RNA sequence: GGGAACGACUCGAGUAGAGUCGAAAACCAGGUCAUUCGUGACCUGGCAGAGGUCCUAAGUCCGUUGAAAGAGCUUGUCAGGAUACAUUCGGAAACGAAUGAUCCUUGGAUUUAGCUCUGGAGGAUAUGGAAAGAUAAGCGUUCUUCGGAACGCUAACAUGGUAGCUGAUUUCGAUCAGCUACCAUGAAAAGAAACAACAACAACAAC
Reactivity to DMS in 0.01 (KOAc 150mM, MgCl2 10mM, bicine 150mM(pH8.5), 24C), signal-to-noise 3, nucleotides 027 to 156: c000c010a040g000g010u000c010a070u010u010c300g040u000g000a010c000c000u000g000g010c010a040g000a160g020g030u000c010c010u000a100a220g020u000c010c000g020u020u020g020a280a230a040g010a030g010c000u000u000g000u000c020a080g000g020a030u010a110c000a010u000u000c000g020g030a180a150a270c010g010a030a010u010g010a060u000c000c010u020u000g030g030a030u000u000u000a030g020c000u000c000u000g000g000a140g010g010a030u000a190u000g000g000a080a120a190g010a150u000a050a090g010c000g030u000u010c000u000u020c300g040g000a030a010c000g020c000u010a000a110
Reactivity to 2A3 in 0.01 (KOAc 150mM, MgCl2 10mM, bicine 150mM(pH8.5), 24C), signal-to-noise 2, nucleotides 027 to 156: c000c010a010g010g000u010c010a020u070u110c290g100u080g010a000c010c010u010g010g000c020a010g050a070g160g160u020c010c000u020a060a050g060u000c020c020g180u210u080g010a020a030a000g000a000g000c010u010u020g010u030c000a000g000g010a010u080a260c000a010u010u000c000g070g000a070a090a070c010g000a000a000u000g000a000u000c000c000u010u100g150g000a060u240u120u150a000g000c000u020c000u000g000g010a010g000g010a020u010a060u130g000g080a080a100a070g150a130u200a140a060g000c000g010u000u000c020u040u090c230g070g000a000a000c000g020c000u010a010a020
This 207-nucleotide RNA was probed chemically with DMS and 2A3. The data come from the RNA Mapping Database (RMDB), library RNAMAK. The 2A3 profile rests on 2,695 reads. The reactions ran in a buffer of 150 mM KOAc, 10 mM MgCl2 and 150 mM bicine (pH 8.5), at 24 C. Values cover nucleotides 27 to 156.